The record gives the reactivity of an RNA of 177 nucleotides to 2A3 and DMS. DMS adducts were read by reverse transcription with MarathonRT. Source: RMDB library TTRDES, as collected in RNAgym.
RNA sequence: GGGAACGACUCGAGUAGAGUCGAAAAAAAAAGAUAUGGAUUAUGAACUACACGGACCGAAGCGUUGAAAGCUAAUCGGAAACGAUUAGCUGGAGCUUCUAGUACGUGCAUAAUCCUAAGUCAAAAACGUUAAUAUUAGCUUCGGCUAAUAUUAACGAAAAGAAACAACAACAACAAC
Reactivity to 2A3 in 0.01 (KOAc 150mM, MgCl2 10mM, bicine 150mM(pH8.5), 24C), signal-to-noise 2, nucleotides 027 to 126: a000a000a010a020a030g020a010u040a000u040g000g000a000u000u010a000u010g000a060a000c040u170a060c300a010c010g000g010a000c000c050g010a020a000g010c020g300u300u080g040a020a020a000g000c000u020a000a000u010c000g020g030a030a010a000c010g000a000u000u000a000g000c000u000g020g020a020g000c000u000u030c010u000a030g010u000a000c010g010u000g020c000a000u000a010a000u000c000c000u000a050a010g010u000c010a010a000a050a150a090
Reactivity to DMS in 0.01 (KOAc 150mM, MgCl2 10mM, bicine 150mM(pH8.5), 24C), signal-to-noise 3, nucleotides 027 to 126: a060a050a080a140a100g000a010u000a050u000g000g000a010u000u000a000u000g000a060a010c060u020a300c000a000c000g000g000a030c090c260g010a010a010g010c000g000u000u000g000a110a160a070g000c000u000a000a020u000c000g010g020a010a010a040c000g010a010u000u000a000g000c000u000g000g000a010g000c000u000u000c000u000a130g000u000a030c000g010u000g000c000a010u000a000a000u010c000c000u010a000a080g000u010c010a080a050a060a080a130
The RNA was probed in 150 mM KOAc, 10 mM MgCl2 and 150 mM bicine (pH 8.5) at 24 C. The 2A3 profile rests on 4,554 reads.